[RMDB]
RNA sequence: GGGAACGACUCGAGUAGAGUCGAAAAAAUAGCUCACUGGUCGAGUGACCCCGCGCCGAAAAUGUACCGGGGCUAAACAUAUUACCGAAACUGUGGAUGAACCUCUUUAGAGGUUCGUGGUAGGAGAGCGUUCUAAGGGCGGUGAAGUCAGACCGGAGAGAAUAGAACAGUUCGCUGUUCUAUUCUCAAAAGAAACAACAACAACAAC
Reactivity to 2A3 in 0.01 (KOAc 150mM, MgCl2 10mM, bicine 150mM(pH8.5), 24C), signal-to-noise 2, nucleotides 027 to 156: a000a000u100a020g010c000u010c040a040c060u040g060g040u010c030g040a090g100u080g060a080c000c030c020c000g010c010g060c030c030g130a100a040a080a140u140g020u090a090c010c060g000g060g000g020c050u110a110a040a010c020a020u100a030u090u090a090c040c020g070a060a050a070c050u030g000u090g110g100a040u070g000a020a000c000c000u000c020u120u250u210a080g000a000g040g000u010u000c000g020u070g010g000u010a010g000g050a070g000a000g010c000g020u040u000c040u060a030a050g010g000g010c010g030g020u040g010a090a000g040u050c030a000g010a070c010c000g030g000a020
Reactivity to DMS in 0.01 (KOAc 150mM, MgCl2 10mM, bicine 150mM(pH8.5), 24C), signal-to-noise 1, nucleotides 027 to 156: a020a080u010a120g020c020u000c030a050c020u010g030g010u000c020g020a130g000u000g010a120c030c000c000c080g070c060g000c050c030g000a040a060a040a140u030g030u020a050c030c030g000g000g000g050c050u000a070a080a070c050a090u000a070u000u010a130c010c020g020a150a040a030c080u010g000u000g010g020a090u010g020a030a010c000c010u010c000u010u000u000a170g010a020g020g010u000u000c010g020u000g030g030u010a060g010g000a110g000a050g020c020g010u010u000c040u000a110a070g000g030g000c040g010g000u000g010a070a090g000u000c040a090g000a170c000c020g030g010a300